[RMDB]
Overview: Chemical mapping of a 177-nucleotide RNA with DMS. Conditions: 150 mM KOAc, 10 mM MgCl2 and 150 mM bicine (pH 8.5), 24 C. For DMS, 620 sequencing reads were counted. DMS adducts were read by reverse transcription with MarathonRT.

RNA sequence: GGGAACGACUCGAGUAGAGUCGAAAAGAUAUGGAAGCGACGAUCACCGAGUACAACAGCUCGGAAACGAGACAUGUACGAGGUGGGAGCUUCCUAAGUCAAAUCACCGGGGUUCGCCCCGGUGAAACACUGGUAACGCGUUCGCGCGUUACCAGUGAAAAGAAACAACAACAACAAC
Reactivity to DMS in 0.01 (KOAc 150mM, MgCl2 10mM, bicine 150mM(pH8.5), 24C), signal-to-noise 1, nucleotides 027 to 126: g010a020u040a300u000g000g000a000a020g050c000g000a050c290g030a090u020c000a010c020c000g000a300g000u000a000c010a040a020c220a180g000c000u000c000g000g000a010a050a280c010g010a030g000a070c120a080u000g020u000a020c000g000a300g000g000u000g020g010g030a040g060c020u000u000c000c000u000a000a060g000u010c050a030a170a140u010c000a000c010c010g010g020g000g020u000u020c300g000c000c000c000c000g000g010u000g000a000a030a090